Structure probing data (DMS and 2A3) for a 177-nucleotide construct.
The 2A3 profile rests on 4,180 reads.
Reactivities are given for positions 27 through 126.
The DMS profile rests on 7,502 reads.
The RNA was probed in 150 mM KOAc, 10 mM MgCl2 and 150 mM bicine (pH 8.5) at 24 C.
For DMS the reverse transcriptase was MarathonRT.
RNA sequence: GGGAACGACUCGAGUAGAGUCGAAAAGUAAAGCCGGAGGAGGGUUUUGGCUUGCGCUCGGUCCGCCCGCGCGUGGUGUGGGCUGGAAUUCGUGUGUGGAGGAUGAUUAAUGCCGCGCGCCCAGGAACCAGUUAAAAGUAUUCGUACUUUUAACUGGAAAAGAAACAACAACAACAAC
Reactivity to DMS in 0.01 (KOAc 150mM, MgCl2 10mM, bicine 150mM(pH8.5), 24C), signal-to-noise 4, nucleotides 027 to 126: g010u000a090a100a150g020c030c030g010g010a060g010g010a100g010g000g000u000u000u000u010g020g000c040u000u010g000c050g010c020u000c040g020g000u000c030c060g000c020c020c030g010c030g020c090g020u010g020g010u000g030u000g010g000g010c030u020g020g000a060a060u010u010c040g020u010g010u000g020u010g000g000a110g000g000a100u010g000a140u000u000a060a080u010g000c020c010g010c050g010c050g020c010c040c050a120g010g010a100a180
Reactivity to 2A3 in 0.01 (KOAc 150mM, MgCl2 10mM, bicine 150mM(pH8.5), 24C), signal-to-noise 3, nucleotides 027 to 126: g000u010a000a090a030g040c020c030g030g030a060g040g040a050g030g040g000u020u040u120u140g020g000c000u020u040g010c030g010c040u030c020g000g030u000c010c020g000c020c000c020g000c000g000c020g080u140g040g100u110g000u030g000g040g000c080u150g030g050a040a040u130u110c000g000u070g000u020g000u050g120g020a040g020g000a030u050g010a020u110u220a160a050u130g020c030c000g010c020g000c020g000c000c020c000a020g060g010a040a060